Notes:
This 177-nucleotide RNA was probed chemically with DMS. Reactivities are given for positions 27 through 126.

RNA sequence: GGGAACGACUCGAGUAGAGUCGAAAAGAACGCCACUUCGGUGGCGUUCGAAGAUCUACCACACGUAGAUCACUAUGGUGUGAGACAUCGAUAGAUGUCAAAUGGUCCGGAAGUUCGCUUCCGGAAAUCAGACUUCAGUGUUCGCACUGAAGUCUGAAAAAGAAACAACAACAACAAC
Reactivity to DMS in 0.01 (KOAc 150mM, MgCl2 10mM, bicine 150mM(pH8.5), 24C), signal-to-noise 2, nucleotides 027 to 126: g000a000a000c000g000c000c000a030c010u000u000c150g000g030u000g000g000c020g030u000u000c010g010a090a100g010a030u000c030u000a100c050c050a160c270a090c150g000u000a010g000a060u000c120a110c130u000a020u000g020g000u000g010u000g000a300g020a020c000a000u000c000g010a220u000a120g010a010u000g010u000c010a020a060a050u030g020g000u000c000c000g000g000a020a010g000u000u010c300g000c000u000u000c010c000g000g000a000a000a080
The RNA was probed in 150 mM KOAc, 10 mM MgCl2 and 150 mM bicine (pH 8.5) at 24 C.